[RMDB]
RNA sequence: GGGAACGACUCGAGUAGAGUCGAAAAGUCCGGGACGAAAGUCAGGACAAGUCGCUCAGCACGACGACGAGUGCGAAGACAAGAGCAGAGGCCGAUUUCGUCUAGGUCUCAAGGUUGGAAACAGCCAGCAUUCAGUAUGGUUCGCCAUACUGAAUGCAAAAGAAACAACAACAACAAC
Reactivity to DMS in 0.01 (KOAc 150mM, MgCl2 10mM, bicine 150mM(pH8.5), 24C), signal-to-noise 4, nucleotides 027 to 126: g020u030c000c000g010g000g010a000c000g010a070a060a060g010u040c020a300g010g000a010c000a110a110g000u000c080g020c020u000c030a160g010c040a020c010g000a160c150g040a040c190g020a160g000u000g000c010g000a140a130g000a130c300a100a120g010a050g010c030a140g000a040g000g030c000c000g000a170u010u010u000c010g000u030c020u020a160g000g000u000c000u000c010a120a010g000g000u000u000g000g010a160a070a130c010a000g010c070c080a120
Source information:
Structure probing data (DMS) for a 177-nucleotide construct. Source: RMDB library OK1LIB, as collected in RNAgym.